[RMDB]
RNA sequence: GGGAACGACUCGAGUAGAGUCGAAAAAGGUAUUAGCCCAAGUCCUUUCCAGGAUUUUGAGAUUCAUACUGGAGAUACAAUGAUCCACAAUAGUAAUGUUCAAUCAGUGGAGACACCAGGAUAUAGAUCGGAUAGGGACUUUCGAGUCCCUAUCCGAAAAAGAAACAACAACAACAAC
Reactivity to 2A3 in 0.01 (KOAc 150mM, MgCl2 10mM, bicine 150mM(pH8.5), 24C), signal-to-noise 1, nucleotides 027 to 126: a000g240g000u190a200u300u130a060g000c000c000c000a000a000g000u000c000c000u000u230u240c040c000a040g130g070a240u000u000u000u110g110a110g000a120u000u250c030a020u090a070c060u000g020g020a020g020a000u120a000c300a170a000u130g000a000u000c000c000a020c050a000a120u000a110g210u110a000a300u060g000u120u110c020a060a120u000c000a200g000u000g050g000a060g000a020c000a090c030c030a000g000g160a000u000a020u020a020g300a080
Reactivity to DMS in 0.01 (KOAc 150mM, MgCl2 10mM, bicine 150mM(pH8.5), 24C), signal-to-noise 1, nucleotides 027 to 126: a070g040g000u050a160u000u080a080g000c020c000c000a140a000g000u010c000c000u000u070u020c170c010a130g020g030a110u060u000u000u020g000a200g030a110u040u020c040a040u000a140c010u060g000g000a130g000a120u000a120c270a210a080u050g000a270u000c060c000a000c150a090a070u000a050g000u010a100a110u000g000u030u020c060a000a110u000c110a030g000u000g000g000a000g000a110c110a130c040c110a020g010g000a010u110a000u060a120g000a120
Source information:
The record gives the reactivity of an RNA of 177 nucleotides to 2A3 and DMS. The RNA was probed in 150 mM KOAc, 10 mM MgCl2 and 150 mM bicine (pH 8.5) at 24 C.